[RMDB]
RNA sequence: GGGAACGACUCGAGUAGAGUCGAAAACUGGAGCAUAUCCGCGCCUUUCUUACCGGCAAUGCCGUGACGGUGCUGCUCGAUGUGGUGUUUUCCGUGGUGUUCAUCGCCGUCAUGUUCUUCUACAGCACCUGAUCCUCGUAUUCGUACGAGGAUCAGGAAAAGAAACAACAACAACAAC
Reactivity to 2A3 in 0.01 (KOAc 150mM, MgCl2 10mM, bicine 150mM(pH8.5), 24C), signal-to-noise 2, nucleotides 027 to 126: c020u020g030g040a000g000c020a060u070a130u170c050c020g070c040g020c030c000u110u220u040c050u110u160a110c020c000g050g010c080a110a110u190g030c030c010g060u040g040a040c030g020g000u010g050c000u000g030c030u010c020g030a100u140g030u090g020g040u060g020u170u030u080u070c020c000g050u070g050g050u110g010u020u110c040a050u120c040g030c040c020g000u040c010a010u100g040u050u020c020u040u000c010u080a060c050a080g020c030a060
Reactivity to DMS in 0.01 (KOAc 150mM, MgCl2 10mM, bicine 150mM(pH8.5), 24C), signal-to-noise 2, nucleotides 027 to 126: c060u000g000g020a070g000c040a090u010a090u010c040c040g010c100g010c030c060u000u020u010c090u020u000a150c150c030g000g020c080a110a150u020g020c030c030g020u000g000a070c120g000g020u010g010c030u000g000c030u000c030g010a100u000g010u000g020g010u010g010u000u000u000u000c070c000g010u000g020g000u000g010u010u000c060a010u010c110g000c030c020g000u000c070a080u000g020u000u000c060u000u010c070u000a110c160a080g000c110a080